[RMDB]
Source: RMDB library 15KLIB, as collected in RNAgym. Chemical mapping of a 170-nucleotide RNA with DMS and 2A3. The reactions ran in a buffer of 150 mM KOAc, 10 mM MgCl2 and 150 mM bicine (pH 8.5), at 24 C. Values cover nucleotides 27 to 129. 2A3 adducts were read by reverse transcription with SuperScript II with manganese. For 2A3, 6,341 sequencing reads were counted.
RNA sequence: GGGAACGACUCGAGUAGAGUCGAAAACAACUGUUAUCUUGCCACUGCAUUGUUAACACUCCAACAAAUAGAGUUGAAGUUUAGUCCACCUGCUCUACAAAGGGCUGGUGAAGCUGCUAACUUUUGUCGAUCACAACCUUCGGGUUGUGAAAAAGAAACAACAACAACAAC
Reactivity to DMS in 0.01 (KOAc 150mM, MgCl2 10mM, bicine 150mM(pH8.5), 24C), signal-to-noise 4, nucleotides 027 to 129: c050a000a000c230u020g000u050u050a030u030c040u020u040g000c070c230a070c140u070g020c040a050u000u030g060u000u000a110a050c060a060c090u020c080c000a070a060c010a080a140a130u080a100g000a090g040u040u040g000a040a040g020u000u000u000a060g080u030c190c000a030c000c030u000g020c020u010c010u030a140c300a050a110a030g010g010g020c000u000g020g020u030g020a100a100g030c150u000g020c040u020a090a040c050u030u000u000u010g060u020c160g000a120
Reactivity to 2A3 in 0.01 (KOAc 150mM, MgCl2 10mM, bicine 150mM(pH8.5), 24C), signal-to-noise 4, nucleotides 027 to 129: c010a010a010c010u030g010u090u030a090u070c050u040u080g010c000c010a140c100u190g000c000a020u010u150g070u080u040a040a000c000a010c060u000c010c010a010a000c060a020a180a050u180a040g060a010g020u060u150g010a000a000g000u000u010u100a000g000u000c000c000a000c000c000u030g020c000u000c000u080a080c110a090a160a060g000g000g000c000u000g020g000u000g000a020a010g000c030u080g030c010u010a020a040c010u010u010u040u060g200u030c020g020a040